The record gives the reactivity of an RNA of 177 nucleotides to 2A3 and DMS. The reactions ran in a buffer of 150 mM KOAc, 10 mM MgCl2 and 150 mM bicine (pH 8.5), at 24 C. It was measured as part of the RMDB library OK2TRN. The DMS profile rests on 4,209 reads.

[RMDB]
RNA sequence: GGGAACGACUCGAGUAGAGUCGAAAAUUGCGAGCGGGGGCCUGCGUGACCUGAUUCCUUCGAUAGCGCGCACAGCUGUCGCUGUGGGUGUAGACGGCCUGUUUAUGGAGGUGCACGAUGAUCCAACACUCUAAGGGUGUUUCGACACCCUUAGAGUAAAAGAAACAACAACAACAAC
Reactivity to 2A3 in 0.01 (KOAc 150mM, MgCl2 10mM, bicine 150mM(pH8.5), 24C), signal-to-noise 2, nucleotides 027 to 126: u080u050g020c020g000a020g040c060g000g060g030g040g000c000c000u010g020c040g030u020g040a070c020c020u000g020a160u140u000c020c000u070u030c050g070a090u120a160g020c000g000c010g070c000a010c000a060g000c050u240g030u300c110g000c010u010g020u050g010g090g040u040g050u020a040g040a050c010g020g000c000c000u050g090u040u130u050a180u130g030g040a010g030g030u070g030c000a000c050g030a060u090g010a020u010c000c010a010a050c030
Reactivity to DMS in 0.01 (KOAc 150mM, MgCl2 10mM, bicine 150mM(pH8.5), 24C), signal-to-noise 3, nucleotides 027 to 126: u010u010g020c060g000a070g020c060g010g000g000g000g020c090c040u000g020c060g020u000g010a080c060c020u000g000a130u000u000c040c030u000u000c040g000a100u010a120g000c020g030c040g020c050a050c070a060g020c020u000g030u010c190g010c040u000g020u000g000g010g030u000g000u000a090g010a110c080g010g000c060c030u000g000u000u000u000a080u020g010g000a040g000g000u000g000c050a070c050g000a080u010g000a100u000c020c030a070a150c200